Chemical mapping of a 177-nucleotide RNA with DMS and 2A3.
[RMDB]
RNA sequence: GGGAACGACUCGAGUAGAGUCGAAAAAUCGUCAGUUGGCCGAUCCGGUCGCGCGGCGAGAACAUCGAUUGCACCUUCUCCAUCGACAGGCGCUCCGGCUGGUACGUGAGGUUCGGCGAGCGCGUGACAUGCGAGGGGCAUUCGUGCCCCUCGCAUGAAAAGAAACAACAACAACAAC
Reactivity to DMS in 0.01 (KOAc 150mM, MgCl2 10mM, bicine 150mM(pH8.5), 24C), signal-to-noise 1, nucleotides 027 to 126: a110u020c030g020u000c030a040g010u010u010g040g000c010c010g010a130u020c130c010g000g030u000c060g010c020g000c080g000g020c020g010a040g020a110a110c140a150u000c050g000a040u000u000g010c050a080c040c010u000u000c030u000c060c080a030u000c040g020a150c030a050g000g010c000g000c000u000c000c100g000g000c000u010g000g010u020a010c000g010u010g000a160g000g020u000u000c020g020g000c040g010a030g010c010g010c030g000u000g010a150
Reactivity to 2A3 in 0.01 (KOAc 150mM, MgCl2 10mM, bicine 150mM(pH8.5), 24C), signal-to-noise 1, nucleotides 027 to 126: a000u040c020g020u010c010a070g050u090u220g040g000c020c040g020a140u030c070c100g030g000u000c030g050c000g000c040g060g000c030g000a040g010a020a020c010a080u090c030g090a080u000u140g040c070a170c040c000u080u040c020u000c040c010a080u030c030g080a060c020a030g100g060c030g000c000u050c090c040g150g000c020u000g000g110u130a060c010g100u150g250a050g180g110u060u050c030g010g000c020g030a010g000c090g000c040g070u040g010a010
Conditions: 150 mM KOAc, 10 mM MgCl2 and 150 mM bicine (pH 8.5), 24 C.
For 2A3, 1,120 sequencing reads were counted.